Annotation
Chemical mapping of a 177-nucleotide RNA with DMS and 2A3. Reactivities are rounded to 0.1 and cut off at 0 and 3. The 2A3 profile rests on 3,182 reads. Values cover nucleotides 27 to 126.
RNA sequence: GGGAACGACUCGAGUAGAGUCGAAAAGAAGAGCCGCAGGCUGCAGCCGAUCUGGUUGGCAGCCAGGCCGACUCCGUUGGCGGCGUCCAUGGUGUCGUACAUGGUGGCGAUCAACUGGGCGAGAUCCUCCCUUGGGAUUUUUCGAAAUCCCAAGGGAAAAAGAAACAACAACAACAAC
Reactivity to DMS in 0.01 (KOAc 150mM, MgCl2 10mM, bicine 150mM(pH8.5), 24C), signal-to-noise 3, nucleotides 027 to 126: g000a150a110g020a140g020c000c020g020c280a130g000g010c010u010g000c000a020g020c000c000g010a160u060c170u050g000g000u000u000g010g010c010a000g000c000c000a030g020g000c050c020g010a090c040u000c010c020g010u010u010g010g000c040g010g000c020g000u020c010c020a000u000g010g010u020g000u040c150g000u020a040c030a100u020g010g020u000g020g000c000g030a090u000c020a060a060c000u010g000g010g000c130g030a130g020a130u010c040c030
Reactivity to 2A3 in 0.01 (KOAc 150mM, MgCl2 10mM, bicine 150mM(pH8.5), 24C), signal-to-noise 5, nucleotides 027 to 126: g100a030a010g060a040g000c020c030g030c190a090g000g020c010u010g010c000a000g000c010c000g120a300u130c110u240g020g010u010u030g150g000c000a000g000c000c000a000g000g000c000c000g050a070c010u010c000c020g020u000u020g020g010c050g010g030c000g040u050c010c000a010u020g040g020u170g120u180c080g050u150a040c010a050u060g030g010u060g050g100c020g030a190u050c030a010a030c020u020g010g020g000c010g000a050g010a040u020c010c000
Conditions: 150 mM KOAc, 10 mM MgCl2 and 150 mM bicine (pH 8.5), 24 C. 2A3 is a SHAPE reagent: it acylates the 2'-hydroxyl of flexible nucleotides of all four kinds.